[RMDB]
RNA sequence: GGGAACGACUCGAGUAGAGUCGAAAACGAAUAGAAUUCGUUCUAUUCGAAUGACUGCUAAAAGCAGAGUUGACUGCGCCGAGCAGAAACCGCAAAGGAAAAAGUAGCCCAGAUUCGUCUGGGCUAACAACUUUCGUCUUUUCGAAGACGAAAGUUGAAAAGAAACAACAACAACAAC
Reactivity to DMS in 0.01 (KOAc 150mM, MgCl2 10mM, bicine 150mM(pH8.5), 24C), signal-to-noise 1, nucleotides 027 to 126: c000g020a020a000u000a020g010a040a030u000u010c180g010u010u000c000u000a020u000u000c000g030a060a110u000g000a160c000u000g000c000u000a000a040a060a110g010c010a010g000a180g000u000u000g000a120c000u000g000c010g010c090c090g000a020g030c020a000g000a030a070a210c030c020g020c160a050a040a070g000g010a050a020a090a070a160g000u000a000g010c010c000c000a020g010a040u000u010c250g010u000c000u000g010g010g000c000u000a000a050
An RNA of 177 nucleotides, treated with DMS and read out base by base. Values cover nucleotides 27 to 126. DMS adducts were read by reverse transcription with MarathonRT. For DMS, 972 sequencing reads were counted.